[RMDB]
RNA sequence: GGGAACGACUCGAGUAGAGUCGAAAAGCUUUGCCGAUCCUUGUCGAACCUGUAUCGUCCAUCUCAACUGCAGCCAAUAGAGUUGGAUAGGUUGGCAGAACGAAUAGUGCCGAUACAGCGGCAAAUGGCUAAUGAUAAGCUUCGGCUUAUCAUUAGCAAAAGAAACAACAACAACAAC
Reactivity to 2A3 in 0.01 (KOAc 150mM, MgCl2 10mM, bicine 150mM(pH8.5), 24C), signal-to-noise 5, nucleotides 027 to 126: g040c030u090u100u130g030c020c010g070a120u080c020c030u040u070g100u090c050g040a080a100c010c020u010g010u010a020u020c000g020u000c020c010a070u030c020u010c070a030a110c000u010g010c020a010g020c000c010a070a060u130a140g210a060g180u230u230g050g040a100u060a100g020g000u000u020g130g040c010a010g010a060a020c050g000a020a000u070a080g040u070g030c030c010g010a000u020a030c010a020g020c010g000g000c000a010a030a070u120g100
Reactivity to DMS in 0.01 (KOAc 150mM, MgCl2 10mM, bicine 150mM(pH8.5), 24C), signal-to-noise 4, nucleotides 027 to 126: g000c090u000u010u000g000c010c010g010a150u010c020c020u020u030g040u000c200g000a060a200c290c030u000g020u010a030u000c030g020u000c060c020a080u000c100u000c040a110a300c050u010g010c040a050g010c020c030a070a130u000a140g000a150g010u010u000g030g000a120u000a040g010g020u010u000g000g030c010a020g010a080a140c190g010a030a080u010a120g010u010g000c120c010g000a040u000a000c040a020g000c000g010g000c000a000a050a040u000g000